Background: Chemical mapping of a 177-nucleotide RNA with DMS and 2A3. The RNA was probed in 150 mM KOAc, 10 mM MgCl2 and 150 mM bicine (pH 8.5) at 24 C. For 2A3 the reverse transcriptase was SuperScript II with manganese.
[RMDB]
RNA sequence: GGGAACGACUCGAGUAGAGUCGAAAACGCGCCACCAUUCGGUACCGCCCCUUGGUGCCGAAUGCUGUUGGUGGAUACGCUAUAUCUAUCUCUUUUUGGCCUCAAACAACGACCACCCCGACGUCCGCGAAAUGAGUACAUUCGUGUACUCAUUUCGAAAAGAAACAACAACAACAAC
Reactivity to DMS in 0.01 (KOAc 150mM, MgCl2 10mM, bicine 150mM(pH8.5), 24C), signal-to-noise 5, nucleotides 027 to 126: c080g010c060g010c000c010a020c040c010a020u000u000c000g020g010u000a000c000c010g000c180c090c130c130u010u010g010g020u000g000c000c000g010a020a010u000g010c190u010g000u010u010g030g030u000g020g010a110u010a080c080g010c070u000a100u000a070u010c050u000a070u000c050u000c020u000u000u000u010u000g000g010c010c020u000c070a060a090a090c110a060a070c080g000a070c030c030a120c040c000c010c020g020a110c110g010u000c040c080g000
Reactivity to 2A3 in 0.01 (KOAc 150mM, MgCl2 10mM, bicine 150mM(pH8.5), 24C), signal-to-noise 5, nucleotides 027 to 126: c040g010c010g010c010c000a010c010c000a010u010u000c000g010g010u000a010c010c010g090c050c040c000c020u040u200g000g000u000g000c000c000g020a000a000u010g000c060u100g020u200u090g010g000u060g030g030a090u120a090c080g020c060u070a050u010a030u230c040u020a090u020c010u010c000u100u090u030u040u110g060g020c020c020u050c030a100a080a130c050a060a040c050g030a020c000c010a030c010c000c010c010g050a080c040g040u040c030c030g040